[RMDB]
RNA sequence: GGGAACGACUCGAGUAGAGUCGAAAACAGGUAAUAUUUCAGCCGUGAUCCAGUGUGGGGAGGGCACAGGUGUAAGAGGGAAGAGCAUGAGCUGAGUGUACCUGACAGUAGUGGUCUCUGUUCAUGAUCCACUGAUUACGUUCGCGUAAUCAGUGGAAAAAGAAACAACAACAACAAC
Reactivity to DMS in 0.01 (KOAc 150mM, MgCl2 10mM, bicine 150mM(pH8.5), 24C), signal-to-noise 1, nucleotides 027 to 126: c030a030g010g010u000a030a060u010a060u010u000u000c030a020g040c010c020g040u000g000a070u000c040c040a110g020u010g000u000g000g030g020g010a110g000g010g010c160a060c150a130g000g010u010g000u000a050a030g000a140g020g000g010a050a050g000a070g000c030a020u000g000a120g010c010u010g000a050g000u000g000u000a010c000c000u000g010a070c080a070g070u000a060g020u000g020g010u010c010u000c030u000g000u000u000c080a050u000g010a190
Reactivity to 2A3 in 0.01 (KOAc 150mM, MgCl2 10mM, bicine 150mM(pH8.5), 24C), signal-to-noise 2, nucleotides 027 to 126: c010a000g030g010u030a080a110u040a230u120u240u050c020a000g000c000c000g010u020g020a020u020c020c050a090g030u010g060u110g220g020g000g000a230g000g060g000c090a020c040a090g040g030u050g040u140a100a040g060a180g020g040g030a070a080g000a010g050c010a020u020g050a020g030c010u010g010a010g010u060g030u010a010c010c020u020g020a030c030a030g190u250a010g050u030g060g030u010c000u000c010u090g080u030u050c100a120u120g030a040
Chemical mapping of a 177-nucleotide RNA with DMS and 2A3.
The reactions ran in a buffer of 150 mM KOAc, 10 mM MgCl2 and 150 mM bicine (pH 8.5), at 24 C.
For 2A3 the reverse transcriptase was SuperScript II with manganese.
Values cover nucleotides 27 to 126.